[RMDB]
RNA sequence: GGGAACGACUCGAGUAGAGUCGAAAAGAAUGUAGCAGCCGCAACAGCAACUACGCCGACGCCUACUGCUUCCGCAACAGGCACAGUAGAAGGCAUCGCUGCACAACUCGCUAACACAAGUUUAAACAAUGAUACGGCAACAGAAACAGCGCCUAAACCCCUAGAGGUAGUUCGCUACCUCUAGGGGAAAAGAAACAACAACAACAAC
Reactivity to 2A3 in 0.01 (KOAc 150mM, MgCl2 10mM, bicine 150mM(pH8.5), 24C), signal-to-noise 1, nucleotides 027 to 156: g070a140a020u080g000u030a030g000c030a010g020c020c020g010c130a150a110c030a090g070c050a130a030c080u050a070c080g030c060c030g010a060c040g030c000c000u020a030c000u030g000c000u110u060c070c010g100c060a140a190c020a150g030g080c190a000c010a070g000u010a050g020a090a080g040g000c000a010u150c020g000c000u000g030c020a020c010a060a080c000u030c010g050c080u030a200a020c000a020c000a050a060g000u060u020u170a190a130a010c080a240a000u100g010a070u100a070c010g020g000c030a040a020c030a110g150a050a140a030c050a000g040c060g110c020c000u050a050a030a010
Structure probing data (2A3) for a 207-nucleotide construct. The data come from the RNA Mapping Database (RMDB), library OK3TST. The RNA was probed in 150 mM KOAc, 10 mM MgCl2 and 150 mM bicine (pH 8.5) at 24 C. Values cover nucleotides 27 to 156.